This 177-nucleotide RNA was probed chemically with 2A3 and DMS. The reactions ran in a buffer of 150 mM KOAc, 10 mM MgCl2 and 150 mM bicine (pH 8.5), at 24 C. The data come from the RNA Mapping Database (RMDB), library TTRDES. 2A3 adducts were read by reverse transcription with SuperScript II with manganese. The 2A3 profile rests on 2,563 reads. 2A3 is a SHAPE reagent: it acylates the 2'-hydroxyl of flexible nucleotides of all four kinds.
RNA sequence: GGGAACGACUCGAGUAGAGUCGAAAAGAUAUGGACCGAUGAUACGCAACAGCGUAUGUAUCGGAAACGAUACUACGACAUGCGUACAUCGGUCCUAAGUCAAAAGGCUGUUCCUUCGGGAACAGCCGCUGUGUUCACCCUUCGGGGUGAACACAGCAAAAGAAACAACAACAACAAC
Reactivity to 2A3 in 0.01 (KOAc 150mM, MgCl2 10mM, bicine 150mM(pH8.5), 24C), signal-to-noise 1, nucleotides 027 to 126: g020a020u040a000u070g000g000a020c030c010g000a000u000g020a170u000a040c000g000c060a300a190c090a300g050c030g000u000a050u300g030u000a000u000c000g020g000a010a010a000c010g000a000u000a000c020u010a000c020g090a040c080a280u300g000c000g020u000a000c000a020u000c000g000g000u000c000c000u010a010a010g000u010c000a030a100a040a040g000g010c000u000g000u040u030c000c000u010u120c300g100g000g010a000a010c020a000g000c000c000
Reactivity to DMS in 0.01 (KOAc 150mM, MgCl2 10mM, bicine 150mM(pH8.5), 24C), signal-to-noise 2, nucleotides 027 to 126: g000a010u000a300u020g000g020a020c000c000g020a000u000g020a210u000a010c010g010c000a120a080c270a270g000c000g030u000a000u000g000u010a000u000c000g040g000a030a030a080c050g000a000u000a000c000u000a010c020g000a030c070a300u020g020c010g000u000a010c020a010u000c000g000g020u000c000c000u000a000a050g000u000c010a170a080a060a220g030g010c010u000g000u000u000c000c000u000u000c280g020g010g010a010a000c000a000g000c000c030